Chemical mapping of a 177-nucleotide RNA with DMS.
RNA sequence: GGGAACGACUCGAGUAGAGUCGAAAACAGCCGCAGCCAAAGCAUACCUGUAUGCCGACACGUUCCACAGCGAGAAUGUUCUGUUGCCACAGGCUGAGACCGUUGCAAGUUGGCAAGCAACAGGCAAGCUCAGUUGCUACUUCGGUAGCAACUGAGCAAAAGAAACAACAACAACAAC
Reactivity to DMS in 0.01 (KOAc 150mM, MgCl2 10mM, bicine 150mM(pH8.5), 24C), signal-to-noise 1, nucleotides 027 to 126: c130a120g050c110c030g010c040a100g020c060c030a020a070a120g020c020a060u000a100c020c140u000g010u000a100u010g000c060c000g030a060c060a160c090g050u000u000c000c020a170c090a100g000c030g020a100g000a020a070u000g000u000u000c000u010g000u000u020g000c040c180a180c180a140g020g050c160u000g010a180g000a100c020c050g000u000u050g000c020a060a170g000u000u000g020g010c020a140a140g000c100a000a000c010a050g000g000c030a090a100

The DMS profile rests on 579 reads.